RNA sequence: GGGAACGACUCGAGUAGAGUCGAAAAUAUGCGGUUGUCUGAUACUGUGCACUGCAGGGUAGCAGCCCCGACAAGUCGUUUAGCGAUCAUCAACACACUUGUUGGGCGUUAUGGGCGCGAAACAAAGUGAUGCGUAAUCCUUCGGGAUUACGCAUCAAAAAGAAACAACAACAACAAC
Reactivity to DMS in 0.01 (KOAc 150mM, MgCl2 10mM, bicine 150mM(pH8.5), 24C), signal-to-noise 2, nucleotides 027 to 126: u000a020u040g060c020g000g020u000u020g000u040c050u030g000a070u000a040c050u000g000u000g010c090a140c050u000g020c020a070g040g000g010u000a050g000c050a110g010c050c000c000c000g040a050c050a010a040g000u000c220g020u000u000u000a170g020c150g000a070u000c120a090u030c130a020a060c130a040c020a020c070u020u000g030u000u000g010g000g000c080g000u000u000a080u020g000g000g030c070g000c050g010a060a120a120c110a060a060a190g020